[RMDB]
RNA sequence: GGGAACGACUCGAGUAGAGUCGAAAAUGGAUGUUAGUCUCCAUAGACAUAGGCUCUCUCUUAAGGAGUUGAUGAUGUAUGCCGCUGAUCCAGCCAUGCACAUUGCCUCCUCUAACGCUUUUCUUGAGAAGACUCGGCUUCGGCCGAGUCAAAAGAAACAACAACAACAAC
Reactivity to 2A3 in 0.01 (KOAc 150mM, MgCl2 10mM, bicine 150mM(pH8.5), 24C), signal-to-noise 3, nucleotides 027 to 129: u060g000g020a030u080g050u190u130a170g060u000c020u000c030c000a000u020a020g020a020c040a070u130a060g020g010c000u000c000u000c000u000c000u080u080a070a000g000g000a000g000u010u000g010a000u000g020a010u000g050u030a000u010g080c100c080g000c030u010g060a300u070c110c040a010g000c000c010a000u010g000c000a000c030a010u000u000g010c000c000u000c020c000u060c010u060a110a040c070g010c030u050u040u000u010c010u020u070g110a020g020a130a040
Reactivity to DMS in 0.01 (KOAc 150mM, MgCl2 10mM, bicine 150mM(pH8.5), 24C), signal-to-noise 3, nucleotides 027 to 129: u080g000g000a020u050g040u060u070a090g060u040c080u010c000c010a060u040a130g010a130c130a140u040a030g010g080c020u050c060u000c060u010c020u010u020a170a040g060g000a030g030u000u000g010a070u000g000a010u030g020u070a020u020g040c220c080g020c060u010g040a240u080c170c140a050g010c040c000a060u020g030c030a080c030a070u050u000g020c290c010u020c030c000u030c070u060a000a000c140g000c200u030u000u010u030c070u010u030g010a000g030a100a030